[RMDB]
Overview: An RNA of 177 nucleotides, treated with DMS and 2A3 and read out base by base. The DMS profile rests on 1,273 reads. It was measured as part of the RMDB library OK2TST. Reactivities are given for positions 27 through 126.
RNA sequence: GGGAACGACUCGAGUAGAGUCGAAAACUGUCAUGACAGCCACUGCGCACUUUUACUCCAAUAGGUUGGAGGUCCUGGAGGAGAUGGCGUUUGUGCCUCACCUAGCCUACGCCAAGCUGGCCAUGGAACCCUUGUGGACAUUCGUGUCCACAAGGGUAAAAGAAACAACAACAACAAC
Reactivity to DMS in 0.01 (KOAc 150mM, MgCl2 10mM, bicine 150mM(pH8.5), 24C), signal-to-noise 2, nucleotides 027 to 126: c040u010g000u000c050a070u000g000a090c080a040g010c020c070a140c090u000g000c050g010c020a090c080u020u000u000u020a110c020u010c010c000a050a240u010a090g000g000u010u000g000g010a090g000g010u000c000c040u020g000g000a300g000g020a090g010a040u000g010g010c020g020u000u000u020g010u000g000c040c040u020c150a030c110c050u020a120g020c020c010u000a020c040g010c000c070a060a140g000c080u000g020g010c070c030a050u000g000g000a130
Reactivity to 2A3 in 0.01 (KOAc 150mM, MgCl2 10mM, bicine 150mM(pH8.5), 24C), signal-to-noise 2, nucleotides 027 to 126: c020u030g100u120c030a090u060g040a050c030a030g030c000c040a090c080u110g000c080g020c040a040c030u060u080u140u140a060c010u000c010c000a070a060u050a160g240g090u060u040g060g050a030g000g030u040c000c020u050g030g000a030g000g030a020g030a020u010g010g000c010g000u070u150u080g120u130g000c000c030u040c020a080c000c030u030a040g030c020c010u020a040c020g000c010c010a010a010g000c030u030g080g000c050c010a010u030g010g030a040